About this RNA
The record gives the reactivity of an RNA of 207 nucleotides to 2A3. High 2A3 reactivity points to a flexible backbone, as in loops and unpaired stretches. The reactions ran in a buffer of 150 mM KOAc, 10 mM MgCl2 and 150 mM bicine (pH 8.5), at 24 C. The 2A3 profile rests on 703 reads. For 2A3 the reverse transcriptase was SuperScript II with manganese. Values cover nucleotides 27 to 156.
[RMDB]
RNA sequence: GGGAACGACUCGAGUAGAGUCGAAAAGAAAGAUUUCUAUCCAGAGAGGUGGAGGGACUGGCCCUAUGAAACCUCGGCAACAUUAUUGUGCCAAUUUCAGCAAGCGCUAGCUUGAAAGAUAGGAAAAAACAGGUUGCGCGCUUCGGCGCGCAACCAACACUAUUACGUGCUUCGGCACGUAAUAGUGAAAAGAAACAACAACAACAAC
Reactivity to 2A3 in 0.01 (KOAc 150mM, MgCl2 10mM, bicine 150mM(pH8.5), 24C), signal-to-noise 2, nucleotides 027 to 156: g080a010a130a000g000a060u010u000u000c020u080a040u040c080c100a020g050a010g000a000g090g030u010g000g030a010g010g000g000a010c030u040g220g080c040c000c020u200a300u090g050a010a010a000c010c000u030c030g000g030c040a140a060c010a040u160u200a170u300u300g030u000g000c000c000a050a060u020u120u190c030a030g080c070a060a000g000c020g040c140u140a100g000c000u020u030g030a050a040a030g020a030u040a030g060g070a000a080a040a040a010a000c020a010g000g010u000u000g000c010g070c000g000c000u070u110c150g060g030c040g000c000g000c040a000a010c000c000a000a000